[RMDB]
RNA sequence: GGGAACGACUCGAGUAGAGUCGAAAAGUGUAAUUCAGAUGUGAGUGUUGACGCUAUGAUUCACAAAACGUAUAUAGAUGUCAAUGAAGAGUACACAGAAGCAGCUGCAGCAACUUCUGUACUAGUGUGGUGGAUCUUUUUUCGAAAAGAUCCACCAAAAAGAAACAACAACAACAAC
Reactivity to DMS in 0.01 (KOAc 150mM, MgCl2 10mM, bicine 150mM(pH8.5), 24C), signal-to-noise 1, nucleotides 027 to 126: g020u010g010u010a090a050u010u000c040a060g000a190u010g010u000g000a120g040u010g000u010u000g000a050c020g000c000u000a020u000g030a170u010u000c090a150c120a150a080a110a120c210g000u000a060u020a050u000a040g020a020u000g020u000c030a000a050u000g020a050a160g000a070g040u000a040c100a010c030a090g040a020a110g000c080a050g000c050u000g020c110a010g000c070a100a090c020u000u010c000u000g010u000a010c040u000a110g000u000g030
Structure probing data (DMS) for a 177-nucleotide construct. DMS adducts were read by reverse transcription with MarathonRT. The data come from the RNA Mapping Database (RMDB), library OK2TRN. The reactions ran in a buffer of 150 mM KOAc, 10 mM MgCl2 and 150 mM bicine (pH 8.5), at 24 C.